Chemical mapping of a 177-nucleotide RNA with DMS and 2A3.
It was measured as part of the RMDB library RFMREP.
Reactivities are given for positions 27 through 126.
2A3 adducts were read by reverse transcription with SuperScript II with manganese.
RNA sequence: GGGAACGACUCGAGUAGAGUCGAAAACUAGGUAUAUUGUAAAGAUAAAGGAUAACUCGGUUGGGAUUGCGUUCUGUAAUGGACGCAUGAACCAGGAAUUCCUAGUAGUCGCGUGUCACUAACGGGCCAAUUCAUCCAAGUUCGCUUGGAUGAAUUGAAAAGAAACAACAACAACAAC
Reactivity to DMS in 0.01 (KOAc 150mM, MgCl2 10mM, bicine 150mM(pH8.5), 24C), signal-to-noise 4, nucleotides 027 to 126: c010u000a040g000g020u000a080u010a070u000u000g010u010a130a130a180g010a090u010a060a100a090g010g000a060u010a060a150c010u000c130g040g020u000u000g010g020g010a100u010u010g010c010g000u000u000c010u000g010u010a070a060u010g010g000a010c000g010c000a010u000g010a070a070c000c000a030g000g010a100a110u000u000c010c000u000a070g020u000a120g020u000c020g030c040g010u000g000u000c100a050c110u010a070a060c060g020g000g010c070
Reactivity to 2A3 in 0.01 (KOAc 150mM, MgCl2 10mM, bicine 150mM(pH8.5), 24C), signal-to-noise 2, nucleotides 027 to 126: c010u010a010g030g110u140a140u050a110u250u190g070u130a200a140a060g060a110u190a090a160a020g090g020a030u040a090a030c000u010c120g100g040u070u030g140g030g070a050u030u030g000c020g000u010u000c000u020g130u060a070a110u230g010g030a000c010g000c000a000u020g030a020a010c010c000a000g020g030a000a040u040u000c000c000u000a000g040u000a010g000u000c030g040c040g270u040g020u010c000a030c140u030a080a030c030g000g020g010c000